[RMDB]
An RNA of 207 nucleotides, treated with 2A3 and read out base by base. The 2A3 profile rests on 1,021 reads. For 2A3 the reverse transcriptase was SuperScript II with manganese. The RNA was probed in 150 mM KOAc, 10 mM MgCl2 and 150 mM bicine (pH 8.5) at 24 C. Source: RMDB library OK3TST, as collected in RNAgym.
RNA sequence: GGGAACGACUCGAGUAGAGUCGAAAACAGAACACCUGGGGCUGCGGGAACAGCCUGCGUACGGCUCUCAUCAACUCCACUGGGGAAGUAAGUAGGCCUGGGCCUGGCUGCUUGCUGGACGAGGCUCCCCCUGAUGGCCAACAUCGGAGCCAGCUGCAUCACUACAUCCAUUCGUGGAUGUAGUGAUAAAAGAAACAACAACAACAAC
Reactivity to 2A3 in 0.01 (KOAc 150mM, MgCl2 10mM, bicine 150mM(pH8.5), 24C), signal-to-noise 2, nucleotides 027 to 156: c030a040g080a090a030c070a050c030c070u040g000g000g000g020c020u030g030c090g050g000g050a030a020c010a010g040c000c010u030g010c000g050u040a020c040g030g010c000u020c030u010c050a180u090c050a140a170c090u040c080c070a090c130u060g000g010g010g000a040a000g020u100a020a030g000u030a030g000g080c050c120u130g080g040g090c010c010u040g080g010c000u010g020c020u070u060g010c040u020g030g040a040c050g040a090g040g040c010u070c000c000c000c010c010u020g050a090u050g060g050c070c040a040a020c010a060u060c030g010g010a000g010c010c000a020g010c000u050g040c050